[RMDB]
RNA sequence: GGGAACGACUCGAGUAGAGUCGAAAAUAAAAUAAUGCACAUAAUCCAGUCGCAGACGCUAAAAAUGACGCUGCGUCGCGACCGAUGUGGCAACGCGCACUCACGCCGAAGUGAAAUCGGUAAAAAACAAAUGCAUACCGUUCGCGGUAUGCAUUUGAAAAGAAACAACAACAACAAC
Reactivity to 2A3 in 0.01 (KOAc 150mM, MgCl2 10mM, bicine 150mM(pH8.5), 24C), signal-to-noise 2, nucleotides 027 to 126: u120a000a050a010a030u290a160a060u170g040c030a020c000a140u120a130a080u090c060c030a010g000u000c000g000c010a080g000a010c000g010c030u080a100a060a030a090a180u210g050a050c140g110c210u050g000c000g020u010c000g010c000g000a020c000c000g050a020u020g000u030g080g020c040a020a060c040g020c010g020c060a040c020u000c000a020c040g030c020c000g010a030a010g020u140g180a090a020a030u010c020g040g000u080a090a070a020a000a020a000
Reactivity to DMS in 0.01 (KOAc 150mM, MgCl2 10mM, bicine 150mM(pH8.5), 24C), signal-to-noise 2, nucleotides 027 to 126: u020a070a100a170a080u000a100a080u000g020c000a020c000a030u000a110a050u000c140c080a120g000u020c020g010c020a100g020a020c000g010c010u040a060a100a080a160a100u010g010a070c200g040c130u010g020c010g000u000c000g000c010g010a010c010c080g000a020u010g010u020g010g000c030a010a010c140g000c100g010c090a070c040u000c060a080c180g000c010c000g000a040a030g000u000g010a030a110a040u010c000g000g000u010a020a020a040a040a060a070